Source: RMDB libraries RFM100 and RFMREP, as collected in RNAgym. Chemical mapping of a 177-nucleotide RNA with DMS and 2A3. Reactivities are rounded to 0.1 and cut off at 0 and 3. For 2A3 the reverse transcriptase was SuperScript II with manganese. In probing experiments dimethyl sulfate is read out at A N1 and C N3, which are open when not base-paired. As a SHAPE reagent, 2A3 marks flexible, mostly unpaired nucleotides at the ribose 2'-OH.
RNA sequence: GGGAACGACUCGAGUAGAGUCGAAAAAAGCGCUAUCAAGAAACGGCGUGGUAUUCAACUACGUGCGUCAAUGCGCAGUUUGAUAAGCGUCGAUGCUACGGGCAAUCGCUUAUCCGAUGUUUACACCGUCAUUCCUUGAGUUCGCUCAAGGAAUGACAAAAGAAACAACAACAACAAC
Reactivity to DMS in 0.01 (KOAc 150mM, MgCl2 10mM, bicine 150mM(pH8.5), 24C), signal-to-noise 2, nucleotides 027 to 126: a100a030g000c000g000c020u000a220u030c210a180a110g000a070a060a070c000g000g000c000g000u000g000g000u000a120u040u010c250a130a010c000u010a020c000g010u000g000c010g000u000c040a050a090u030g040c000g000c000a100g000u000u000u000g000a050u000a020a030g000c010g000u000c050g020a250u000g010c000u040a080c300g000g000g000c010a040a030u000c020g040c000u000u000a000u000c000c160g010a100u010g020u000u000u030a130c080a060c250c180
Reactivity to 2A3 in 0.01 (KOAc 150mM, MgCl2 10mM, bicine 150mM(pH8.5), 24C), signal-to-noise 4, nucleotides 027 to 126: a000a000g030c020g000c010u080a080u150c080a070a050g060a090a110a000c000g000g000c010g040u000g000g010u060a170u140u230c080a070a010c010u010a000c000g050u090g290c010g030u010c010a060a020u090g000c000g000c000a000g010u000u070u050g000a000u000a000a010g000c000g000u010c050g060a050u040g000c020u050a120c160g120g060g040c000a000a040u010c000g000c010u000u000a000u000c010c020g060a030u040g060u060u110u080a080c080a020c000c030